Structure probing data (DMS and 2A3) for a 177-nucleotide construct. Conditions: 150 mM KOAc, 10 mM MgCl2 and 150 mM bicine (pH 8.5), 24 C. For DMS the reverse transcriptase was MarathonRT. Reactivities are rounded to 0.1 and cut off at 0 and 3. For DMS, 9,023 sequencing reads were counted.

RNA sequence: GGGAACGACUCGAGUAGAGUCGAAAAGAUAUGGAGCAUACAGAGGAGAAGUAGUCGGAAACGACUAUACUUCGCGAAACUCUGAUGCUCCUAAGUCAAAGGCGUGCUAGGUUCGCCUAGCACGCCACAUUAUUCUCUCGUUCGCGAGAGAAUAAUGAAAAGAAACAACAACAACAAC
Reactivity to DMS in 0.01 (KOAc 150mM, MgCl2 10mM, bicine 150mM(pH8.5), 24C), signal-to-noise 4, nucleotides 027 to 126: g000a020u000a030u010g000g000a020g010c000a010u010a130c020a020g010a020g020g000a140g000a020a030g020u000a020g010u000c000g010g000a010a010a020c000g010a020c000u000a090u000a060c010u000u000c010g020c240g010a180a110a090c000u000c000u000g000a020u000g010c000u000c000c000u010a000a040g000u000c010a100a140a120g010g010c000g020u000g000c000u010a010g010g010u000u010c290g010c000c010u010a000g010c000a000c000g010c000c010a000
Reactivity to 2A3 in 0.01 (KOAc 150mM, MgCl2 10mM, bicine 150mM(pH8.5), 24C), signal-to-noise 3, nucleotides 027 to 126: g020a000u020a010u050g010g000a010g000c030a010u300a290c010a170g020a010g170g120a150g010a070a000g020u010a010g000u000c010g000g000a010a000a000c010g010a000c000u000a020u030a040c000u000u010c000g010c030g260a300a290a070c010u010c000u000g010a010u000g000c000u000c000c000u010a000a000g000u000c020a070a090a110g000g000c010g000u010g000c000u000a010g020g050u070u120c280g130c060c010u000a000g000c000a000c010g000c000c000a000